The record gives the reactivity of an RNA of 207 nucleotides to 2A3.
2A3 adducts were read by reverse transcription with SuperScript II with manganese.
RNA sequence: GGGAACGACUCGAGUAGAGUCGAAAAUUGUACUUCUUAGAGGGACUAUUGUGCAAUAAGCCAAUGGAAGUUUAAGGCAAUAACAGGUCUGUGAUGCCCCUAGACGUGCUCGGCCGCACGCGCGUUACAAUGACUGGCGCAAAAAGUAUUUCCUGUCCUACACAUCGACGUUCGCGUCGAUGUGUAGAAAAGAAACAACAACAACAAC
Reactivity to 2A3 in 0.01 (KOAc 150mM, MgCl2 10mM, bicine 150mM(pH8.5), 24C), signal-to-noise 1, nucleotides 027 to 156: u050u060g080u050a160c050u100u050c000u090u150a010g000a130g050g060g030a060c010u010a000u030u120g000u010g000c060a140a240u050a210a000g000c020c000a030a220u210g040g040a120a030g080u040u070u030a020a000g050g000c000a050a080u060a120a000c030a120g020g040u080c050u040g120u050g030a110u120g050c000c000c000c170u000a010g050a110c050g000u020g050c050u030c170g140g020c030c040g000c010a010c000g000c000g000c000g010u000u000a060c050a120a090u200g060a060c020u010g020g000c000g000c000a000a030a000a000a200g040u010a120u000u080u000c000c000u100g030u090c000
Background:
The 2A3 profile rests on 337 reads.